[RMDB]
About this RNA: Source: RMDB libraries RFM100 and RFMREP, as collected in RNAgym. Structure probing data (DMS and 2A3) for a 177-nucleotide construct. The RNA was probed in 150 mM KOAc, 10 mM MgCl2 and 150 mM bicine (pH 8.5) at 24 C.

RNA sequence: GGGAACGACUCGAGUAGAGUCGAAAAGGAGUCAAACGGGCACGACCCGAAACCCGGUGAUCUACGCGUGGGCAAGGUGAAGCAUGGCGAAAGCCAUGUGGAGGCCUGUUAGGGUUGGUGUCUUUCAACAUUAUUGGUGCUUCGGCACCAAUAAUGUAAAAGAAACAACAACAACAAC
Reactivity to DMS in 0.01 (KOAc 150mM, MgCl2 10mM, bicine 150mM(pH8.5), 24C), signal-to-noise 6, nucleotides 027 to 126: g010g000a050g000u010c040a050a090a140c120g000g000g010c000a020c010g020a050c010c000c010g000a020a110a170c010c000c000g010g020u010g010a120u030c140u050a080c080g020c040g020u040g020g010g020c150a050a020g010g010u000g000a280a220g000c000a010u000g000g000c000g010a120a080a170g000c000c000a000u000g010u000g000g000a190g010g010c000c000u000g010u000u010a170g010g000g000u000u000g000g020u000g010u000c010u000u010u010c080a100
Reactivity to 2A3 in 0.01 (KOAc 150mM, MgCl2 10mM, bicine 150mM(pH8.5), 24C), signal-to-noise 2, nucleotides 027 to 126: g140g020a040g030u100c090a080a050a050c120g030g040g000c020a050c120g070a090c020c010c000g050a010a010a010c010c000c000g040g020u060g040a250u060c060u180a120c070g000c020g100u150g000g000g000c040a030a020g000g000u090g050a010a010g000c000a010u000g000g010c030g020a030a000a000g020c000c000a000u000g010u020g010g000a050g120g040c000c000u010g000u040u060a040g040g020g000u010u060g070g020u040g000u000c010u010u000u000c010a000